This 207-nucleotide RNA was probed chemically with 2A3.

[RMDB]
RNA sequence: GGGAACGACUCGAGUAGAGUCGAAAAUAAGAAAAAUAAACAAGUGGUGGUAGUCCGCCACUCUAAGGGGACGCCUUUAGAAGAAGAGGCUAGGUGGUAUUCCGGUGUGGGAUACUUGGUUAUAUGUAAGGGGAUGGUACGUUCGCGUACCAUCCAAGAUUUAGUCAUCCUUCGGGAUGACUAAAUCAAAAGAAACAACAACAACAAC
Reactivity to 2A3 in 0.01 (KOAc 150mM, MgCl2 10mM, bicine 150mM(pH8.5), 24C), signal-to-noise 1, nucleotides 027 to 156: u070a020a020g060a050a080a130a010a010u200a040a130a010c100a290a080g000u000g000g020u000g020g070u030a010g000u050c000c000g020c000c000a000c000u000c000u000a000a060g000g000g000g030a040c120g110c010c000u010u000u020a010g000a050a000g010a040a010g030a040g010g000c000u000a020g030g110u020g030g000u030a000u000u060c030c050g100g060u240g060u190g140g000g000a000u000a010c020u010u140g070g000u110u110a100u040a040u160g160u130a040a040g140g000g000g020a000u000g000g000u010a000c010g000u000u040c100g000c010g080u000a000c000c000a000u030c000c000a000a000
Notes:
For 2A3, 585 sequencing reads were counted. It was measured as part of the RMDB library M2RFPK. For 2A3 the reverse transcriptase was SuperScript II with manganese.